This 207-nucleotide RNA was probed chemically with DMS and 2A3. The DMS profile rests on 3,288 reads. Conditions: 150 mM KOAc, 10 mM MgCl2 and 150 mM bicine (pH 8.5), 24 C. For DMS the reverse transcriptase was MarathonRT.
RNA sequence: GGGAACGACUCGAGUAGAGUCGAAAAGUGCCUGUUCUACAGUCUUGAAUGUGAGGCUAGUCGAUCCAUGUGUAUCCUUAUCGGACGAAUUGCUCGGAUUUGUCGGGAUGACUCAGUAUCCCCGGGUCUUGACGCAGAUACGAAGAACAUGAGUCACACUCUAAGGGUGGUUCGCCACCCUUAGAGUAAAAGAAACAACAACAACAAC
Reactivity to DMS in 0.01 (KOAc 150mM, MgCl2 10mM, bicine 150mM(pH8.5), 24C), signal-to-noise 2, nucleotides 027 to 156: g010u000g000c000c040u000g040u010u000c050u000a090c080a040g030u000c040u030u000g010a180a170u000g010u000g020a070g000g080c030u010a110g010u000c050g020a080u010c040c030a080u000g010u050g000u000a090u010c010c050u010u000a100u010c060g020g030a170c010g020a030a140u000u000g020c070u000c030g000g000a140u000u000u000g030u000c010g010g030g000a120u000g010a090c070u000c050a110g030u000a180u000c040c030c030c050g000g000g010u000c030u000u000g030a180c140g050c100a050g020a050u000a090c050g030a110a090g010a100a060c040a050u000g000a140g000u000c000a140c180
Reactivity to 2A3 in 0.01 (KOAc 150mM, MgCl2 10mM, bicine 150mM(pH8.5), 24C), signal-to-noise 3, nucleotides 027 to 156: g050u040g070c010c010u020g040u010u030c070u120a060c020a050g010u020c020u080u090g160a270a150u200g100u080g080a010g000g020c020u010a020g040u040c030g010a030u000c020c040a070u050g070u040g020u090a060u090c020c030u090u090a110u200c080g050g010a000c010g040a070a080u070u040g040c040u020c020g030g030a040u000u000u050g100u120c060g000g000g030a050u050g010a050c010u030c110a060g010u080a120u060c010c000c000c010g020g030g000u000c000u030u230g030a030c090g000c080a020g000a030u040a090c050g030a040a050g000a130a000c050a040u060g010a010g030u050c000a020c000